An RNA of 177 nucleotides, treated with DMS and 2A3 and read out base by base. For DMS the reverse transcriptase was MarathonRT. Source: RMDB library OK1LIB, as collected in RNAgym.

RNA sequence: GGGAACGACUCGAGUAGAGUCGAAAAGAAAGAAGAAAGAAACGCGCGAAAGUAUCUAGAUUCUAAUAAUAAUGAAUCUUGAGAGUGGUCGAUAGAUACGAAAAAGCGCGGAGACCACUGAAAGAAAGGGUAGUAUAUUCUUCGGAAUAUACUACCCAAAAGAAACAACAACAACAAC
Reactivity to DMS in 0.01 (KOAc 150mM, MgCl2 10mM, bicine 150mM(pH8.5), 24C), signal-to-noise 3, nucleotides 027 to 126: g000a100a040a050g000a080a060g000a060a120a090g000a080a120a140c050g020c010g000c000g000a070a110a250g010u000a000u000c000u000a050g000a080u000u000c010u010a070a110u040a090a160u090a090a050u010g000a050a040u000c010u020u000g010a120g000a080g000u010g000g010u000c000g020a110u020a040g000a020u000a010c020g000a100a010a120a080a150g000c000g000c000g010g020a170g040a040c000c000a000c000u030g000a170a080a150g000a100a100a070
Reactivity to 2A3 in 0.01 (KOAc 150mM, MgCl2 10mM, bicine 150mM(pH8.5), 24C), signal-to-noise 3, nucleotides 027 to 126: g070a030a110a020g080a030a020g050a030a300a000g050a020a100a020c000g010c000g000c010g040a150a030a010g000u000a000u010c030u000a010g020a020u010u020c040u070a030a060u150a260a030u170a090a100u260g010a010a000u020c000u020u120g090a120g030a000g030u010g000g030u010c000g020a010u030a050g010a000u000a000c000g070a090a100a060a000a000g010c000g000c000g000g000a000g000a000c000c010a020c020u060g060a150a140a050g110a040a070a010